[RMDB]
RNA sequence: GGGAACGACUCGAGUAGAGUCGAAAAACGGAAAAGCUGUAGCUAAUACUUGCAUUAUCCUUUUGGAUAAGUAUUUGUUAGAAGGAAUUAUAACAAAGAAGUAACACGUAAAGUGUGUAUCAAUCGAGUUUCUGACCUAUCAGCUUUUGAUGUUAGGCUAUGGGUUCCAGUUCGCUGGAACCCAUAGAAAAGAAACAACAACAACAAC
Reactivity to 2A3 in 0.01 (KOAc 150mM, MgCl2 10mM, bicine 150mM(pH8.5), 24C), signal-to-noise 2, nucleotides 027 to 156: a000c010g000g030a000a030a050a000g010c000u050g030u120a010g050c010u070a000a010u010a060c010u050u070g040c050a300u050u030a010u070c020c070u160u240u270u300g030g000a020u010a000a000g000u010a030u020u020u010g000u000u030a030g040a060a010g020g000a000a000u210u040a080u090a160a010c030a040a100a000g030a100a000g010u070a080a000c000a000c050g040u120a030a130a090g040u040g000u010g010u030a110u150c060a100a000u080c080g000a020g060u030u050u020c020u030g130a110c010c010u030a050u190c000a000g010c000u060u060u040u120g060a080u070g010u000u070a030g090g000

Chemical mapping of a 207-nucleotide RNA with 2A3.
Values are in units of 0.01, from 0 to 300, in steps of 10.